[RMDB]
RNA sequence: GGGAACGACUCGAGUAGAGUCGAAAACAAUGCAGGUUAAGCCAAAGGGAUGUCCCGACCUGAGGCCGACAAUCCAGGGAACCGGAUGUCAUCACGUUGUUGCAGUACCAGAUGGCAUCUUAAAUCCAAAAGAACACAUAGUUCGCUAUGUGUUCAACGGCAUUAAUUAGUUCGCUAAUUAAUGCCGAAAAGAAACAACAACAACAAC
Reactivity to DMS in 0.01 (KOAc 150mM, MgCl2 10mM, bicine 150mM(pH8.5), 24C), signal-to-noise 2, nucleotides 027 to 156: c050a150a090u020g020c050a110g010g000u000u000a080a040g000c000c000a060a300a030g000g000g020a050u000g030u010c020c010c020g010a220c000c000u000g010a300g000g030c030c060g000a110c120a080a090u000c100c070a100g000g030g030a150a110c070c040g080g010a010u000g020u000c010a100u000c050a170c260g000u000u010g000u000u000g010c000a080g020u010a040c060c110a120g000a000u000g020g040c000a010u000c010u010u000a060a040a090u000c060c010a030a100a200a190g010a020a000c000a000c000a010u000a010g020u000u010c300g000c000u000a020u010g030u000g010u010u000c010a030a170
Reactivity to 2A3 in 0.01 (KOAc 150mM, MgCl2 10mM, bicine 150mM(pH8.5), 24C), signal-to-noise 3, nucleotides 027 to 156: c060a050a130u230g050c060a050g130g080u120u130a040a030g010c000c020a010a020a050g030g010g010a040u040g030u030c000c000c020g000a020c000c000u000g000a020g010g000c000c000g020a020c020a120a050u120c150c080a010g000g020g020a020a060c030c010g010g010a000u000g000u010c000a000u010c000a000c120g000u010u010g000u000u030g030c060a070g100u190a110c030c040a030g000a000u000g000g010c000a000u000c000u000u010a010a020a010u010c020c000a090a040a010a030g000a000a000c000a000c000a010u010a000g030u030u020c080g000c100u000a000u000g000u010g000u000u010c000a000a010
This 207-nucleotide RNA was probed chemically with DMS and 2A3. Reactivities are given for positions 27 through 156. For 2A3, 2,361 sequencing reads were counted. The RNA was probed in 150 mM KOAc, 10 mM MgCl2 and 150 mM bicine (pH 8.5) at 24 C. The data come from the RNA Mapping Database (RMDB), library M2RFPK. For 2A3 the reverse transcriptase was SuperScript II with manganese.